[RMDB]
The record gives the reactivity of an RNA of 207 nucleotides to 2A3 and DMS.
High DMS reactivity at an A or C suggests that its Watson-Crick edge is free.
It was measured as part of the RMDB library OK3TST.
The RNA was probed in 150 mM KOAc, 10 mM MgCl2 and 150 mM bicine (pH 8.5) at 24 C.
The 2A3 profile rests on 6,581 reads.
RNA sequence: GGGAACGACUCGAGUAGAGUCGAAAAGUGUGCAGAUGUGCGUGUGUAGACAAGUGUGUGUGCCAUUGUGCUUGUUUGUGCAGACGUACGUGCAGGUGUGUGUGCAGAUGUGUGUGUGUAGCUGUGUGUACACACAUGUGCCCUGUGUGCAGGUGUACCUACGUAAAUACUUCGGUAUUUACGUAGGAAAAGAAACAACAACAACAAC
Reactivity to 2A3 in 0.01 (KOAc 150mM, MgCl2 10mM, bicine 150mM(pH8.5), 24C), signal-to-noise 6, nucleotides 027 to 156: g100u080g010u030g000c040a020g010a220u080g060u020g010c030g010u080g010u030g030u130a040g030a080c040a060a060g030u030g010u000g010u010g040u060g070c030c030a090u100u140g070u070g020c020u020u030g040u060u030u100g120u040g010c000a000g020a090c030g020u060a010c030g010u040g000c030a040g020g030u020g000u000g000u010g020u020g020c030a030g010a150u050g060u010g010u000g000u000g020u020g040u120a030g020c030u010g020u040g010u040g020u120a010c010a000c000a010c000a010u050g020u020g090c010c010c020u050g030u020g010u040g040c040a050g010g060u070g030u100a050
Reactivity to DMS in 0.01 (KOAc 150mM, MgCl2 10mM, bicine 150mM(pH8.5), 24C), signal-to-noise 2, nucleotides 027 to 156: g040u000g010u000g020c010a100g020a070u000g020u010g010c010g010u000g010u010g010u000a120g020a050c030a010a050g000u000g030u000g010u010g020u000g010c050c070a130u010u000g030u000g000c020u000u000g020u000u000u000g030u000g040c010a060g000a060c040g010u000a030c050g030u000g020c010a070g020g020u000g010u000g020u000g030u000g010c030a080g000a090u000g010u010g030u000g020u000g010u000g020u020a090g030c040u030g010u000g020u000g020u000a030c000a020c020a010c010a010u010g050u000g000c040c050c030u000g010u000g010u000g010c000a070g020g020u000g010u000a170